RNA sequence: GGGAACGACUCGAGUAGAGUCGAAAAGCUAGGAGGACUGACCAAGAGAGAAGGGAAAGCAUUUUGUUCUGACCAUAAUGACAUAAGGAGUUCAUUUCACACCAAACAUCUUUCCAGCAUGUUUCUCAGAUGUUAACUAGUUCGCUAGUUAACAUCUAAAAGAAACAACAACAACAAC
Reactivity to 2A3 in 0.01 (KOAc 150mM, MgCl2 10mM, bicine 150mM(pH8.5), 24C), signal-to-noise 9, nucleotides 027 to 126: g040c030u040a030g010g040a020g010g020a050c030u050g020a050c030c020a090a010g040a010g010a010g020a060a070g040g020g020a030a030a010g030c050a060u030u040u030u060g040u040u030c040u040g050a060c010c010a030u090a130a060u110g050a030c030a050u170a080a090g100g010a060g040u050u030c010a020u040u070u070c060a060c010a020c030c030a040a050a030c030a040u020c020u030u060u020c010c000a020g040c060a090u070g010u000u000u000c020u000c020
Reactivity to DMS in 0.01 (KOAc 150mM, MgCl2 10mM, bicine 150mM(pH8.5), 24C), signal-to-noise 9, nucleotides 027 to 126: g010c060u000a060g000g010a050g000g010a080c070u000g000a110c090c060a070a090g010a080g010a060g010a080a070g020g010g010a060a050a050g010c120a070u010u010u010u010g010u010u010c070u000g010a120c160c060a060u010a040a050u000g000a070c080a080u030a080a090g010g010a100g010u010u000c050a050u010u010u020c070a050c070a070c080c060a030a040a070c120a050u010c040u010u000u010c020c020a100g040c150a080u000g000u000u000u000c000u000c150
Chemical mapping of a 177-nucleotide RNA with 2A3 and DMS. For 2A3 the reverse transcriptase was SuperScript II with manganese. For DMS the reverse transcriptase was MarathonRT. The RNA was probed in 150 mM KOAc, 10 mM MgCl2 and 150 mM bicine (pH 8.5) at 24 C.